Structure probing data (2A3 and DMS) for a 170-nucleotide construct.
Reactivities are given for positions 27 through 129.
The DMS profile rests on 10,618 reads.
For 2A3 the reverse transcriptase was SuperScript II with manganese.
[RMDB]
RNA sequence: GGGAACGACUCGAGUAGAGUCGAAAACGAACAGAAGACCCUGGUACCGGGGGGGAAUAGGCCAUAGUACGAGGGGAGAUGCUAGGAGUCGGGGGAAGCCAGAACGACUGGGAAAGGAAAGAAAGCACGCCACGAACGUUCGCGUUCGUGAAAAGAAACAACAACAACAAC
Reactivity to 2A3 in 0.01 (KOAc 150mM, MgCl2 10mM, bicine 150mM(pH8.5), 24C), signal-to-noise 3, nucleotides 027 to 129: c030g050a030a000c040a040g090a110a010g080a150c030c000c010u020g080g010u090a140c030c010g000g000g020g000g000g030g000a020a050u110a040g030g010c000c010a030u020a050g040u080a080c030g040a050g000g000g000g000a040g000a000u060g020c040u020a040g010g010a050g000u020c030g000g000g000g000g000a010a020g010c020c000a010g010a040a030c030g050a030c030u030g030g000g000a050a040a000g020g000a040a000a010g040a010a010a010g070c020a020c110g020c020
Reactivity to DMS in 0.01 (KOAc 150mM, MgCl2 10mM, bicine 150mM(pH8.5), 24C), signal-to-noise 4, nucleotides 027 to 129: c110g030a080a040c120a050g030a090a090g010a180c100c060c000u030g000g060u030a090c090c080g050g020g050g000g060g040g000a040a050u050a060g030g060c070c030a000u070a100g030u070a090c040g020a000g030g010g030g010a050g030a050u040g020c110u030a060g000g070a000g010u030c060g000g000g000g000g000a050a050g050c020c050a080g070a130a050c100g010a090c060u000g020g020g040a040a050a050g000g000a030a050a040g020a050a030a060g000c080a110c140g000c090